[RMDB]
RNA sequence: GGGAACGACUCGAGUAGAGUCGAAAACGAUCGCUUUCGAGGCGGCGCUGCUGGGCUGCGACGCCCACUCCAUCGACGUCAAUGAACUCGCGGUAUUCCUGCAGCAGGCCAACCUGACCUACGGCGACUCAUCCUCGACGUUCGCGUCGAGGAUGAGAAAAGAAACAACAACAACAAC
Reactivity to 2A3 in 0.01 (KOAc 150mM, MgCl2 10mM, bicine 150mM(pH8.5), 24C), signal-to-noise 1, nucleotides 027 to 126: c060g040a130u080c000g010c050u060u120u090c030g080a030g000g000c000g010g000c020g030c010u040g010c010u040g000g020g020c000u030g090c050g040a020c030g080c010c010c010a020c010u040c020c010a110u080c020g010a040c040g080u060c010a070a200u160g040a040a020c040u000c060g000c010g050g050u030a130u060u060c000c020u020g000c030a010g010c010a030g040g100c010c010a060a100c000c010u030g100a120c030c010u050a040c030g020g010c020g010a020
Reactivity to DMS in 0.01 (KOAc 150mM, MgCl2 10mM, bicine 150mM(pH8.5), 24C), signal-to-noise 1, nucleotides 027 to 126: c200g000a050u000c090g010c030u000u000u000c040g000a210g020g000c060g020g010c000g010c030u000g020c070u000g000g020g050c040u000g020c170g010a140c100g000c000c040c050a110c040u000c110c020a030u000c050g000a040c090g010u030c080a070a100u000g040a090a110c200u000c050g000c010g000g000u000a120u010u000c050c000u000g010c030a040g010c040a110g000g050c070c030a040a090c100c010u000g000a090c040c020u000a110c060g000g010c010g030a130